[RMDB]
RNA sequence: GGGAACGACUCGAGUAGAGUCGAAAAGGAGACGCUGAAGACGCCCUUUAGGGGGCGUCCGAGUCAUCAAUGAGACACCACCCUUUGAAACUGGAGGAUCUAACCCUGAGCCGUGAAUCCGGCCAGAAUAUAAGCUAGUCUUCGGACUAGCUUAUAUAAAAGAAACAACAACAACAAC
Reactivity to DMS in 0.01 (KOAc 150mM, MgCl2 10mM, bicine 150mM(pH8.5), 24C), signal-to-noise 8, nucleotides 027 to 126: g010g000a100g010a040c020g020c110u030g000a160a080g000a010c010g010c000c000c000u000u000u050a120g020g000g020g010g020c000g020u000c000c000g000a080g010u010c020a090u010c040a080a090u010g010a140g000a110c090a120c040c020a090c030c020c030u010u000u010g010a080a100a110c090u000g000g010a160g010g010a130u000c020u000a090a100c090c060c000u010g010a120g010c010c020g000u010g010a140a140u030c190c000g000g000c010c020a090g000a120
Reactivity to 2A3 in 0.01 (KOAc 150mM, MgCl2 10mM, bicine 150mM(pH8.5), 24C), signal-to-noise 6, nucleotides 027 to 126: g120g010a050g010a010c040g010c180u060g030a050a000g000a010c000g010c000c000c000u000u030u130a220g000g000g000g000g020c000g000u000c000c000g010a010g000u010c010a070u040c010a070a140u120g020a030g010a040c020a020c040c000a050c010c000c030u060u070u110g140a130a100a020c060u070g020g020a030g050g030a050u030c030u060a050a090c000c010c020u020g010a020g030c000c000g020u030g050a080a010u000c020c000g010g000c010c000a010g040a040